[RMDB]
RNA sequence: GGGAACGACUCGAGUAGAGUCGAAAAAUGCGGCCAGGAUCGCCAAAACCGCCCAUAAGAACGGCACCACGCUUCGCGAGGAAGCAUUGGCAAGCGGCCUCGUAUCGGAAGAAGAUUAUGACCGGCACUACUCCGACUCAUUCGUGAGUCGGAGUAGAAAAGAAACAACAACAACAAC
Reactivity to DMS in 0.01 (KOAc 150mM, MgCl2 10mM, bicine 150mM(pH8.5), 24C), signal-to-noise 2, nucleotides 027 to 126: a170u000g020c110g030g010c060c010a220g000g020a110u010c110g010c030c010a060a010a080a040c080c050g020c020c000c020a150u000a160a120g030a090a070c070g000g020c070a130c110c110a090c170g040c050u000u000c020g030c040g010a050g000g000a010a040g020c010a080u020u030g010g000c130a130a110g000c020g010g020c010c010u000c020g020u000a090u020c120g040g030a080a080g000a080a040g030a080u030u040a080u010g020a090c040c010g000g000c150a230
Reactivity to 2A3 in 0.01 (KOAc 150mM, MgCl2 10mM, bicine 150mM(pH8.5), 24C), signal-to-noise 1, nucleotides 027 to 126: a020u110g020c000g000g050c020c010a010g060g070a130u110c030g000c060c000a000a030a090a030c000c050g040c050c010c000a090u040a020a070g070a130a030c050g010g000c020a020c000c010a080c070g040c000u040u050c050g050c070g030a050g090g000a020a030g000c010a000u050u100g060g000c060a040a110g000c000g060g000c030c020u000c010g050u030a130u170c030g020g010a030a030g020a070a000g050a010u150u040a090u180g090a110c010c000g010g030c030a020